[RMDB]
RNA sequence: GGGAACGACUCGAGUAGAGUCGAAAACCGCGAAAUUGAUGCGGCCUGCAGAGAGCUGGAGGCAGAGAUUGCCUCCCUCAGAGCCCAGCUGCCUGCCCAGGAAGAGGGUGCACCCAAGGACCCAUUCACAAUCAACGCUGUUCGCAGCGUUGAUUGUAAAAGAAACAACAACAACAAC
Reactivity to DMS in 0.01 (KOAc 150mM, MgCl2 10mM, bicine 150mM(pH8.5), 24C), signal-to-noise 1, nucleotides 027 to 126: c030c000g000c050g000a050a080a180u030u000g010a110u000g010c010g010g030c050c050u000g000c030a040g010a200g000a020g020c100u010g030g000a020g020g010c000a030g010a190g020a160u000u020g020c000c000u000c020c000c040u000c040a140g030a130g020c020c110c010a090g000c030u020g000c010c090u000g000c050c030c040a130g030g000a050a080g000a120g020g000g010u000g010c050a040c060c040c090a100a110g010g020a140c010c030c000a100u000u000c090
An RNA of 177 nucleotides, treated with DMS and read out base by base.
The data come from the RNA Mapping Database (RMDB), library OK2TRN.
For DMS the reverse transcriptase was MarathonRT.
Values cover nucleotides 27 to 126.
The reactions ran in a buffer of 150 mM KOAc, 10 mM MgCl2 and 150 mM bicine (pH 8.5), at 24 C.